[RMDB]
Conditions: 150 mM KOAc, 10 mM MgCl2 and 150 mM bicine (pH 8.5), 24 C.
This 177-nucleotide RNA was probed chemically with DMS.
The data come from the RNA Mapping Database (RMDB), library M2PK50.

RNA sequence: GGGAACGACUCGAGUAGAGUCGAAAAGUCUAGAGGUUCGCCUCUAGACAAAGAACGCUAAUUCGCUAAGCGAGGCCGCGAGAGCGCCCAUACGCGAAGAAAAAAGAGCCCUGUUCGCAGGGCUCAAGUAUUUCUCUGAGUUCGCUCAGAGAAAUACAAAAGAAACAACAACAACAAC
Reactivity to DMS in 0.01 (KOAc 150mM, MgCl2 10mM, bicine 150mM(pH8.5), 24C), signal-to-noise 2, nucleotides 027 to 126: g020u020c000u010a000g010a030g010g030u010u020c300g010c010c000u000c000u000a030g010a000c010a010a040a100g020a130a240c090g000c020u000a060a180u000u000c000g000c000u000a110a090g010c050g040a100g010g010c060c030g020c000g000a140g000a270g030c000g020c050c000c070a130u000a050c270g010c000g000a030a060g020a010a040a050a020a090a100g010a010g010c000c000c010u000g020u000u010c150g030c020a000g000g030g010c000u000c000a000a010